[RMDB]
RNA sequence: GGGAACGACUCGAGUAGAGUCGAAAAGAUUACGUGUCGUUGUGGAAUCGAUACUACGCACGAGAUUCCAAGGUCUCUGUAGUGCGUCCGCUGGUGACGUCUUUGGAGUCACGUUCGAUAUACGAAAGCUAUCUACUACGUUCGCGUAGUAGAUAGCAAAAGAAACAACAACAACAAC
Reactivity to 2A3 in 0.01 (KOAc 150mM, MgCl2 10mM, bicine 150mM(pH8.5), 24C), signal-to-noise 3, nucleotides 027 to 126: g090a050u120u150a040c070g030u040g000u050c040g000u030u050g000u010g010g040a040a060u050c020g000a000u010a070c050u030a020c040g000c010a010c020g000a020g010a040u030u010c030c010a010a010g090g000u030c040u020c040u130g100u150a010g040u040g040c000g030u030c010c010g110c110u120g140g040u130g020a020c010g010u010c030u000u020u050g020g010a010g000u000c000a000c090g020u040u030c030g000a030u030a010u010a130c030g090a080a020a000
Reactivity to DMS in 0.01 (KOAc 150mM, MgCl2 10mM, bicine 150mM(pH8.5), 24C), signal-to-noise 3, nucleotides 027 to 126: g010a080u030u020a120c110g020u010g010u010c020g000u000u000g050u000g000g000a080a140u020c000g000a050u000a030c170u010a080c010g000c150a050c020g010a060g020a010u000u000c010c030a020a000g010g010u010c010u000c040u000g000u000a050g010u000g010c030g020u010c040c020g040c080u030g040g010u010g020a020c080g010u030c010u000u020u020g020g010a010g010u000c010a060c030g000u010u000c030g000a100u020a040u020a070c040g000a040a100a100